[RMDB]
RNA sequence: GGGAACGACUCGAGUAGAGUCGAAAAAGUCAAGAGUCUUUGGCACCGUUUUUGGUGAGCAGAUUUCUUUUGCCUAUUGAAGGGUGAAAGACAUGAAAACCAUUACCAGAGUUCGCUCUGGUAAUGGCUUGGAGUCAAGGUUCGCCUUGACUCCAAGAAAAGAAACAACAACAACAAC
Reactivity to DMS in 0.01 (KOAc 150mM, MgCl2 10mM, bicine 150mM(pH8.5), 24C), signal-to-noise 1, nucleotides 027 to 126: a090g030u000c070a080a070g010a100g010u010c030u010u010u000g020g010c030a030c000c000g000u020u000u000u010u020g000g010u020g000a060g000c150a070g010a070u020u010u000c000u000u010u000u000g000c010c010u010a090u010u000g000a250a150g000g010g010u000g030a010a020a020g000a040c300a050u000g050a090a060a050a210c010c000a000u000u010a020c000c000a010g010a020g010u000u030c300g000c000u000c000u010g010g000u000a000a000u000g000g000
Reactivity to 2A3 in 0.01 (KOAc 150mM, MgCl2 10mM, bicine 150mM(pH8.5), 24C), signal-to-noise 1, nucleotides 027 to 126: a020g080u050c020a000a080g040a050g100u030c050u050u100u090g050g070c010a030c010c020g110u030u020u020u210u300g010g000u030g020a020g050c060a000g020a080u000u060u000c010u000u010u000u010g000c000c000u040a090u060u190g120a120a080g040g000g000u040g020a040a040a010g000a020c050a040u190g080a030a000a020a060c000c000a000u000u010a000c000c000a010g000a000g040u050u080c200g050c030u000c000u000g010g000u010a000a000u000g010g040

An RNA of 177 nucleotides, treated with DMS and 2A3 and read out base by base. It was measured as part of the RMDB library RFMREP. The 2A3 profile rests on 861 reads.